[RMDB]
RNA sequence: GGGAACGACUCGAGUAGAGUCGAAAAGCCGGUACGGCAGCGCGCACACGCACACAGUGCGCCGUUAUCUUCUCCGGCUUGCGUGCAUGCUGCCUUCCGCAAAGCUGCAGCGCGGCGCUCUGGAGGCCGAGAUACGGCAGUUCGCUGCCGUAUCUCGAAAAGAAACAACAACAACAAC
Reactivity to DMS in 0.01 (KOAc 150mM, MgCl2 10mM, bicine 150mM(pH8.5), 24C), signal-to-noise 2, nucleotides 027 to 126: g060c070c000g010g000u000a040c160g000g000c120a020g030c010g010c070g000c070a110c120a080c160g050c090a100c140a180c130a060g000u000g040c080g060c020c060g020u000u030a030u000c030u000u020c060u000c080c010g000g000c090u000u010g000c040g000u000g000c040a110u000g000c010u000g010c090c000u010u020c060c120g000c090a040a050a040g000c130u040g050c000a110g000c070g040c050g000g020c050g000c010u000c010u000g000g000a070g010g040c100
Reactivity to 2A3 in 0.01 (KOAc 150mM, MgCl2 10mM, bicine 150mM(pH8.5), 24C), signal-to-noise 3, nucleotides 027 to 126: g040c000c000g000g030u080a060c030g020g000c020a000g000c000g020c000g020c050a000c020a030c130g080c020a010c010a020c020a080g010u030g040c030g000c010c000g010u030u110a080u100c100u190u030c020u060c020c000g000g000c000u000u050g020c000g020u040g040c050a050u090g000c000u000g000c000c060u040u110c050c030g070c050a020a090a020g030c080u050g010c020a010g020c030g010c000g030g030c020g000c000u050c040u070g040g040a040g010g060c050
The data come from the RNA Mapping Database (RMDB), library RFM100. Structure probing data (DMS and 2A3) for a 177-nucleotide construct. Values are in units of 0.01, from 0 to 300, in steps of 10. The DMS profile rests on 2,107 reads.